[RMDB]
RNA sequence: GGGAACGACUCGAGUAGAGUCGAAAAGAUAGGGGGUUCGCCCCCUAUCAAAGGUGCAAUGUACUUUCUGCACCAAAGACGGAUAAACCGUCAAAGUACAAAAAACGAUGGCGUUCGCGCCAUCGAACAUAUUUGACAACUUCGGUUGUCAAAUAUGAAAAGAAACAACAACAACAAC
Reactivity to DMS in 0.01 (KOAc 150mM, MgCl2 10mM, bicine 150mM(pH8.5), 24C), signal-to-noise 3, nucleotides 027 to 126: g000a000u000a010g030g000g020g010g020u000u010c300g020c000c000c000c000c000u000a000u000c010a060a120a080g000g010u010g000c000a040a300u010g010u000a010c020u000u000u000c170u010g000c000a010c010c010a040a060a070g000a030c010g020g010a290u010a080a130a150c020c000g000u000c000a010a040a060g000u000a010c000a000a060a070a090a100a180c020g010a010u000g000g000c000g020u010u010c200g020c030g000c010c000a000u000c000g000a040a130
Reactivity to 2A3 in 0.01 (KOAc 150mM, MgCl2 10mM, bicine 150mM(pH8.5), 24C), signal-to-noise 3, nucleotides 027 to 126: g000a000u000a000g000g000g010g010g010u010u010c020g120c000c000c000c000c000u000a000u010c000a000a010a000g000g010u000g010c020a060a140u110g000u060a020c020u050u130u100c100u070g000c000a010c000c010a050a020a000g000a000c000g010g000a080u150a230a190a190c000c020g000u000c000a010a020a000g010u020a010c000a010a150a010a010a030a010c010g000a010u000g010g020c020g040u030u060c210g000c000g000c080c000a000u000c000g000a010a000
Structure probing data (DMS and 2A3) for a 177-nucleotide construct. For DMS, 2,118 sequencing reads were counted. 2A3 adducts were read by reverse transcription with SuperScript II with manganese. It was measured as part of the RMDB library M2PK50.